RNA sequence: GGGAACGACUCGAGUAGAGUCGAAAAUGAAACAGAAAAGUGAUAUGCAAAGAAGAUGGAGAUUCAAUUGUUUAUUGUUACGAAAAAAACACUUUUGUGUUUCUCGUGAAUCCUUCGGCUAUCCAUAUGAGCAAGGAUUGUUCGCAAUCCUUGCUCAAAAAGAAACAACAACAACAAC
Reactivity to DMS in 0.01 (KOAc 150mM, MgCl2 10mM, bicine 150mM(pH8.5), 24C), signal-to-noise 1, nucleotides 027 to 126: u000g000a090a030a000c060a000g000a040a050a170a110g050u000g080a110u000a020u010g060c050a020a060a090g000a140a100g000a140u000g020g000a100g060a010u030u000c050a060a110u020u000g010u050u000u070a180u160u020g000u000u050a090c190g000a000a000a040a120a000a000a050c030a000c110u000u000u000u000g000u000g060u010u000u000c030u000c020g010u000g020a040a120u000c000c000u000u000c010g000g000c000u030a020u030c000c010a090u040a040
Notes: This 177-nucleotide RNA was probed chemically with DMS. DMS adducts were read by reverse transcription with MarathonRT. Source: RMDB library RFM100, as collected in RNAgym. Values are in units of 0.01, from 0 to 300, in steps of 10. The reactions ran in a buffer of 150 mM KOAc, 10 mM MgCl2 and 150 mM bicine (pH 8.5), at 24 C.